This 207-nucleotide RNA was probed chemically with DMS and 2A3. For DMS the reverse transcriptase was MarathonRT. The reactions ran in a buffer of 150 mM KOAc, 10 mM MgCl2 and 150 mM bicine (pH 8.5), at 24 C.
RNA sequence: GGGAACGACUCGAGUAGAGUCGAAAAUAGCGAAGUAGGAUUUUAUGCGUCAAGUGUUCACAGGUUGGGGAGUCGCCGUGAAACGAAAAGCAGAAAGCGUGCUGCUUACGAUAUAAUUUCCGCACCCAUAAGAAGUCUCUGUUCGCAGAGACUUCAAACUAAAAAGCAGGUUCGCCUGCUUUUUAGUAAAAGAAACAACAACAACAAC
Reactivity to DMS in 0.01 (KOAc 150mM, MgCl2 10mM, bicine 150mM(pH8.5), 24C), signal-to-noise 2, nucleotides 027 to 156: u000a080g020c060g000a070a130g020u020a100g010g010a030u000u000u010u000a020u000g020c040g000u010c060a070a260g000u000g040u000u000c050a010c050a130g010g020u000u000g050g000g000g010a070g060u000c020g010c010c030g020u000g020a070a060a110c050g020a160a060a030a010g010c000a060g000a040a030a190g000c120g020u020g010c010u000g040c020u000u000a030c040g000a140u000a050u000a040a110u000u000u000c030c000g000c050a150c050c020c010a110u020a080a170g000a020a030g000u000c000u000c010u010g030u000u010c300g000c000a020g030a020g050a000c000u010u000c010a000a050
Reactivity to 2A3 in 0.01 (KOAc 150mM, MgCl2 10mM, bicine 150mM(pH8.5), 24C), signal-to-noise 2, nucleotides 027 to 156: u170a020g040c040g060a070a000g060u080a050g040g000a010u010u010u020u020a040u070g010c020g010u050c080a070a060g020u060g040u200u010c010a010c040a110g020g010u010u100g040g000g000g030a040g060u050c030g000c020c010g020u020g000a040a000a000c020g020a050a040a010a000g010c020a010g020a110a160a020g130c090g090u110g020c040u000g000c000u000u010a010c000g040a000u010a010u010a160a010u020u020u000c010c000g000c020a050c000c000c010a040u090a110a060g010a000a000g000u000c000u000c010u000g050u060u050c190g010c050a000g000a000g000a000c000u000u000c000a000a000
Record summary
For 2A3 the reverse transcriptase was SuperScript II with manganese. The DMS profile rests on 2,830 reads.